[RMDB]
RNA sequence: GGGAACGACUCGAGUAGAGUCGAAAAUGUGUCGAUUACUAAAGAUCUUCAAAGAGAUUACCAACGAUAACAUCUUUACUGAGGCUUUAGCGUUAAAAGUAACUGCUGGUAAAGCAUCUACAUAUAUGGUUGAGCUUGCAUCUUUUUACGUAGGAGGACUUGAACAGACCUUCGGGUCUGUUCAAGUAAAAGAAACAACAACAACAAC
Reactivity to 2A3 in 0.01 (KOAc 150mM, MgCl2 10mM, bicine 150mM(pH8.5), 24C), signal-to-noise 1, nucleotides 027 to 156: u020g060u000g000u010c020g100a110u140u060a100c000u100a250a000a000g010a120u050c020u100u060c090a110a110a070g090a000g000a050u020u090a090c060c090a110a020c130g020a060u080a150a110c080a090u020c010u010u100u150a080c070u080g070a020g030g010c020u030u010u030a010g000c010g000u060u060a020a120a060a020g000u020a060a060c060u040g060c010u020g060g210u180a090a000a000g000c040a090u010c020u120a060c000a060u090a000u030a030u090g040g000u020u010g000a000g010c000u030u020g000c020a050u300c120u120u090u000u040u080a030c060g040u080a030g000g060a010g000g060

Overview: Structure probing data (2A3) for a 207-nucleotide construct. The data come from the RNA Mapping Database (RMDB), library OK3TST. The RNA was probed in 150 mM KOAc, 10 mM MgCl2 and 150 mM bicine (pH 8.5) at 24 C. For 2A3, 394 sequencing reads were counted. Values cover nucleotides 27 to 156.